The record gives the reactivity of an RNA of 177 nucleotides to 2A3 and DMS. For 2A3 the reverse transcriptase was SuperScript II with manganese. For DMS the reverse transcriptase was MarathonRT. For DMS, 746 sequencing reads were counted.

RNA sequence: GGGAACGACUCGAGUAGAGUCGAAAAGCGCUUAAAUUAAAUUUCCCUUGCUGAGCUCAUCUCAGCAAACAAUAACUAAUAACAAAUAAGAACAGCAGGGAAGGCUGUUCUUAUUUGUUACAAUAAAUAUCUGCUAUUAGUUCGCUAAUAGCAGAUAAAAAGAAACAACAACAACAAC
Reactivity to 2A3 in 0.01 (KOAc 150mM, MgCl2 10mM, bicine 150mM(pH8.5), 24C), signal-to-noise 1, nucleotides 027 to 126: g060c100g030c180u180u190a020a090a050u140u090a050a100a180u040u300u000c030c000c030u030u000g000c010u000g000a010g000c040u050c060a150u120c030u000c000a020g030c000a000a000a000c010a000a060u190a030a000c070u130a050a150u020a070a020c000a000a020a000u010a040a000g000a000a010c000a000g040c030a020g160g070g100a130a040g170g030c000u000g000u000u000c000u000u000a000u000u000u020g000u000u000a000c000a010a010u050a010a010a010
Reactivity to DMS in 0.01 (KOAc 150mM, MgCl2 10mM, bicine 150mM(pH8.5), 24C), signal-to-noise 1, nucleotides 027 to 126: g000c170g010c070u020u040a090a070a130u010u010a000a030a260u000u000u000c000c000c030u010u000g050c000u000g000a000g000c300u030c230a050u000c000u030c020a000g000c010a000a010a060c070a100a030u000a010a130c190u030a100a170u010a000a000c000a000a000a000u000a000a010g000a010a020c000a010g050c020a070g010g040g040a160a120g010g010c000u000g010u000u000c000u000u000a000u000u000u010g000u000u000a010c100a040a080u000a100a050a150